[RMDB]
RNA sequence: GGGAACGACUCGAGUAGAGUCGAAAAACGUUGAUAUGGAUUUACUCCGAGGAGACGAACUACCACGAACAGGGGUAACUCUACCCGUGGCGUCUCCGUUUGACGAGUAAGUCCUUAGUCAACAUGCUACCAGUUCCCUUCGGGGAACUGAAAAGAAACAACAACAACAAC
Reactivity to 2A3 in 0.01 (KOAc 150mM, MgCl2 10mM, bicine 150mM(pH8.5), 24C), signal-to-noise 6, nucleotides 027 to 129: a000c060g000u000u000g000a020u010a030u060g020g010a000u010u010u000a000c000u010c010c030g020a070g000g000a000g020a010c000g020a070a050c110u190a060c100c010a000c010g050a140a030c070a130g040g000g000g040u120a110a060c030u030c040u070a050c000c050c010g000u000g010g000c000g010u000c010u010c000c000g010u040u050u070g010a010c010g010a000g000u010a000a000g000u000c000c000u010u000a010g010u000c000a000a000c000a020u070g020c000u080a100c010
Reactivity to DMS in 0.01 (KOAc 150mM, MgCl2 10mM, bicine 150mM(pH8.5), 24C), signal-to-noise 4, nucleotides 027 to 129: a000c210g040u000u080g050a040u040a000u110g050g000a020u000u000u000a040c000u030c000c020g040a090g000g000a050g030a020c030g040a110a040c100u000a300c090c040a050c010g040a080a300c040a110g040g020g010g000u000a050a170c070u050c010u050a110c160c150c010g050u010g000g020c020g020u030c030u000c000c030g000u000u000u010g000a170c300g000a000g020u010a080a000g020u030c000c000u040u000a030g000u010c000a000a000c000a090u030g010c090u030a080c120